[RMDB]
RNA sequence: GGGAACGACUCGAGUAGAGUCGAAAACUCGAAGCCCGUCAAUUCGAGAAACGCGCGCGCGGACGCGUCCGAAUUCGCGAUCACGCGCGUCACGCCGAGCCGCGCGCACUGCUUGAUCGCGAGCCGACAUUUAUAGCCCUUUCGAGGGCUAUAAAUGAAAAGAAACAACAACAACAAC
Reactivity to 2A3 in 0.01 (KOAc 150mM, MgCl2 10mM, bicine 150mM(pH8.5), 24C), signal-to-noise 3, nucleotides 027 to 126: c000u000c010g020a060a010g100c040c040c060g150u150c070a120a160u040u030c010g020a010g020a080a170a060c080g030c010g000c000g020c010g000c020g030g020a010c000g000c000g040u010c030c070g060a050a080u120u050c000g000c000g000a050u110c050a040c080g000c000g000c000g000u000c000a010c020g040c030c030g040a040g030c030c010g000c000g000c000g030c030a020c040u100g020c020u050u060g010a010u020c010g000c010g000a010g010c020c020g060a060
Reactivity to DMS in 0.01 (KOAc 150mM, MgCl2 10mM, bicine 150mM(pH8.5), 24C), signal-to-noise 5, nucleotides 027 to 126: c020u000c020g010a080a050g010c060c020c080g020u010c110a110a120u000u000c010g000a040g000a080a100a120c120g010c040g010c030g020c040g000c060g010g010a070c020g010c010g000u000c120c070g010a070a100u010u000c010g010c010g010a050u000c090a110c130g010c010g010c050g000u000c020a020c070g000c060c080g000a050g040c120c050g000c010g010c010g000c040a080c050u010g010c070u000u000g000a020u000c030g030c010g010a060g010c110c090g000a200
An RNA of 177 nucleotides, treated with 2A3 and DMS and read out base by base.